[RMDB]
RNA sequence: GGGAACGACUCGAGUAGAGUCGAAAACAGUCCAAAGGCCAGAUACUUCAUCAUCACCAGGUCGGAGAACACGAACGCGCCCGCGACGACGGCAACAAUCAGCGCCGCGGCGGUAAUGAUGCGUCCGAGAUAUAGACGAGUUCGCUCGUCUAUAUCUAAAAGAAACAACAACAACAAC
Reactivity to DMS in 0.01 (KOAc 150mM, MgCl2 10mM, bicine 150mM(pH8.5), 24C), signal-to-noise 8, nucleotides 027 to 126: c150a100g010u020c030c020a060a110a110g000g020c030c010a060g010a090u020a050c070u000u010c030a060u020c020a050u010c050a040c070c040a070g010g020u020c030g000g000a130g010a100a110c120a130c050g020a060a040c030g010c040g000c110c010c010g020c020g000a060c030g000a130c020g000g010c040a100a110c270a110a070u030c090a100g000c060g000c000c000g010c030g000g000c030g000g000u010a050a040u020g010a040u010g000c060g010u010c020c030g000
Reactivity to 2A3 in 0.01 (KOAc 150mM, MgCl2 10mM, bicine 150mM(pH8.5), 24C), signal-to-noise 9, nucleotides 027 to 126: c030a030g080u030c020c010a070a040a030g040g000c020c010a020g020a070u060a120c020u090u070c030a110u030c010a020u030c010a030c060c010a040g040g020u030c030g030g000a090g040a050a020c060a000c090g050a100a000c010g000c000g010c010c010c000g000c010g030a080c030g030a040c000g040g010c010a070a030c040a100a220u250c080a050g070c010g000c090c010g010c000g020g000c020g010g010u100a140a100u190g150a060u120g020c000g020u010c010c010g060

Chemical mapping of a 177-nucleotide RNA with DMS and 2A3. The reactions ran in a buffer of 150 mM KOAc, 10 mM MgCl2 and 150 mM bicine (pH 8.5), at 24 C. Source: RMDB library OK1LIB, as collected in RNAgym. For 2A3, 14,331 sequencing reads were counted.